Conditions: 150 mM KOAc, 10 mM MgCl2 and 150 mM bicine (pH 8.5), 24 C.
Structure probing data (2A3) for a 207-nucleotide construct.
For 2A3 the reverse transcriptase was SuperScript II with manganese.
Values cover nucleotides 27 to 156.
The data come from the RNA Mapping Database (RMDB), library M2RFOK.
[RMDB]
RNA sequence: GGGAACGACUCGAGUAGAGUCGAAAAGCGGGGCUUGAAACGCGGGUAGCGCGCACGCCCGGCGAAGAAGUUCGCAUACGCGGUGUGCUGGUGCCGACGUGUCUGCUGCAACGGCACGCUCGACACCUAGAACAUACCGUAUUCGUACGGUAUGUAAGUAUGAGGUCAUCUUCGGAUGACCUCAUACAAAAGAAACAACAACAACAAC
Reactivity to 2A3 in 0.01 (KOAc 150mM, MgCl2 10mM, bicine 150mM(pH8.5), 24C), signal-to-noise 1, nucleotides 027 to 156: g100c030g000g000g000g000c040u030u160g070a110a120a000c080g030c000g090g160g050u140a080g120c000g000c020g010c070a010c000g000c010c000c000g000g020c050g000a010a050g020a120a010g070u040u080c000g000c020a030u070a270c090g030c060g050g010u040g010u030g000c030u020g000g000u010g000c000c000g000a020c000g000u000g000u020c020u150g020c070u130g120c030a110a020c000g000g000c000a000c000g000c080u000c000g000a000c010a000c000c010u020a110g040a090a000c000a000u000a000c000c000g020u010a020u020u160c180g110u000a000c000g000g000u000a000u010g000u000a040a050